[RMDB]
RNA sequence: GGGAACGACUCGAGUAGAGUCGAAAAGAUAUGGAGGUCGAAGCAGCGCGCCCUGUGAUCGGAAACGAUCACAUAUCGAACUACGCUGCCGACCUCCUAAGUCAAAAGGCAUGGUUCGCCAUGCCAAUCCCCAAAUGAUGUUCGCAUCAUUUGGGGAAAAAGAAACAACAACAACAAC
Reactivity to DMS in 0.01 (KOAc 150mM, MgCl2 10mM, bicine 150mM(pH8.5), 24C), signal-to-noise 3, nucleotides 027 to 126: g010a010u000a300u000g000g000a030g010g000u000c010g010a200a150g020c000a000g020c010g030c230g010c070c020c100u000g000u000g000a000u010c000g000g000a130a060a070c000g010a000u000c020a000c020a020u000a060u000c100g010a120a110c090u000a120c030g020c010u000g020c010c020g000a010c010c010u000c000c010u010a010a070g000u000c040a060a050a090a080g010g010c000a010u000g000g010u010u030c230g010c000c010a020u000g010c000c010a030a060
Reactivity to 2A3 in 0.01 (KOAc 150mM, MgCl2 10mM, bicine 150mM(pH8.5), 24C), signal-to-noise 3, nucleotides 027 to 126: g010a010u040a010u080g000g000a010g010g020u020c030g090a300a060g000c000a000g030c090g030c020g050c130c010c000u020g000u000g000a000u000c010g030g000a030a020a010c000g000a010u060c000a000c000a010u190a020u030c050g020a090a110c110u250a130c300g000c000u010g000c030c000g000a010c000c000u000c010c000u010a000a000g000u000c010a020a000a070a100g010g000c010a000u020g000g000u030u100c270g020c090c000a000u000g010c000c000a000a020